[RMDB]
RNA sequence: GGGAACGACUCGAGUAGAGUCGAAAAGCAAGUCGCAUCGCAAAACCGCGGCAAGUGGAGCUAGCGAGAGGAGGCUGGGUUUUGGCUUCCUUAAGCAAUCGGUCACCGAGAAGGUGUGGUCGUUACCUAGACAGUUUUCUGUUCGCAGAAAACUGAACAACGGGGUAUCGUUCGCGAUACCCCGUUGAAAAGAAACAACAACAACAAC
Reactivity to 2A3 in 0.01 (KOAc 150mM, MgCl2 10mM, bicine 150mM(pH8.5), 24C), signal-to-noise 1, nucleotides 027 to 156: g010c020a030a050g020u030c000g000c010a060u060c120g050c190a100a020a030a100c120c130g010c000g100g000c090a070a120g050u090g000g110a040g000c000u050a020g030c000g000a040g000a000g080g010a000g020g000c010u040g000g300g000u110u020u200u300g000g000c000u010u000c000c000u000u050a010a010g000c000a000a150u080c010g030g030u010c000a000c050c080g030a070g070a150a020g050g000u040g050u060g000g000u000c010g030u030u100a120c000c020u020a050g010a160c000a000g000u000u000u000u000c020u000g070u050u090c210g000c120a000g000a000a000a000a000c000u000g020a000a030
The record gives the reactivity of an RNA of 207 nucleotides to 2A3. 2A3 adducts were read by reverse transcription with SuperScript II with manganese. The reactions ran in a buffer of 150 mM KOAc, 10 mM MgCl2 and 150 mM bicine (pH 8.5), at 24 C. Values cover nucleotides 27 to 156.